[RMDB]
RNA sequence: GGGAACGACUCGAGUAGAGUCGAAAAAAGUCUGCAUUAUCACGAGGAGCUUGGAAAGGAGGUAACACACUCAAGGCAAAUUUCAAGUAACUCAUCCUGGAGGCAGCUGCCUACUCUGCAGCUGUGGUUCUCCACCACAGAGAGAAGAAAAGGGAGACGUGACCUUUUAUUUCGAUAAAAGGUCACGAAAAGAAACAACAACAACAAC
Reactivity to 2A3 in 0.01 (KOAc 150mM, MgCl2 10mM, bicine 150mM(pH8.5), 24C), signal-to-noise 4, nucleotides 027 to 156: a000a000g090u010c030u050g000c000a050u060u070a080u270c060a010c130g000a000g040g010a020g030c000u000u020g010g030a070a060a050g050g030a010g050g050u200a220a020c040a000c000a040c060u040c040a060a070g160g000c050a130a090a060u040u060u020c020a020a000g010u010a060a040c010u000c020a020u080c040c050u050g020g010a010g050g000c030a040g060c050u110g000c040c010u080a130c040u050c030u080g000c000a030g000c010u000g000u010g010g000u040u030c000u010c010c000a030c000c000a010c010a000g030a010g000a000g060a180a010g040a020a080a010a000g070g000g000a010g000a000
Reactivity to DMS in 0.01 (KOAc 150mM, MgCl2 10mM, bicine 150mM(pH8.5), 24C), signal-to-noise 1, nucleotides 027 to 156: a010a040g010u010c080u020g090c080a080u000u000a090u000c050a100c050g010a180g030g000a280g010c090u030u010g000g050a090a030a100g000g050a080g000g000u000a030a070c070a140c110a080c050u000c060a110a140g010g030c050a030a050a060u000u000u010c010a050a200g030u000a080a250c010u000c000a110u010c040c050u000g000g000a040g000g020c010a060g020c030u000g000c010c030u000a000c060u000c020u020g010c010a120g050c080u000g040u000g050g000u000u000c010u010c030c020a300c010c010a020c050a050g010a080g030a210g010a090a030g000a050a030a000a070g010g010g040a140g000a180